[RMDB]
The record gives the reactivity of an RNA of 177 nucleotides to DMS and 2A3. The 2A3 profile rests on 695 reads. Conditions: 150 mM KOAc, 10 mM MgCl2 and 150 mM bicine (pH 8.5), 24 C. 2A3 is a SHAPE reagent: it acylates the 2'-hydroxyl of flexible nucleotides of all four kinds. Values cover nucleotides 27 to 126.

RNA sequence: GGGAACGACUCGAGUAGAGUCGAAAAAUUAAUUCAUUUUGAUGAGGGCCCCUCAUUCAAAUGUUAUGCUUAGUGCUUCCCUCACAUUUUGAGUUGAUUAUUUCCAAUUUCGAGAGUGAGAUUGAUCUCCCUCAUUUCAUUUCGAUGAAAUGAGGGAAAAAGAAACAACAACAACAAC
Reactivity to DMS in 0.01 (KOAc 150mM, MgCl2 10mM, bicine 150mM(pH8.5), 24C), signal-to-noise 2, nucleotides 027 to 126: a000u010u000a000a020u000u000c010a000u000u010u010u010g020a120u000g020a030g020g000g000c090c080c000c040u040c110a120u080u080c100a040a140a050u010g010u000u020a050u010g040c050u010u020a100g040u040g010c040u010u010c000c000c000u010c020a020c030a030u000u000u000u000g030a070g010u000u000g000a020u010u000a090u010u000u000c010c000a040a110u000u000u010c100g010a080g010a120g000u030g000a020g000a070u010u010g000a080u020c130
Reactivity to 2A3 in 0.01 (KOAc 150mM, MgCl2 10mM, bicine 150mM(pH8.5), 24C), signal-to-noise 2, nucleotides 027 to 126: a010u010u010a030a000u000u000c000a000u000u000u030u080g270a290u040g000a040g000g010g010c000c030c000c000u040c040a060u240u080c020a050a090a100u260g030u160u140a060u070g010c000u050u150a050g060u100g270c000u090u130c020c000c000u020c000a000c000a010u020u040u000u020g020a010g000u000u000g010a020u010u060a040u070u010u000c030c010a020a050u130u070u100c050g020a060g010a020g070u090g030a070g000a080u090u150g000a030u050c040
It was measured as part of the RMDB libraries RFM100 and RFMREP.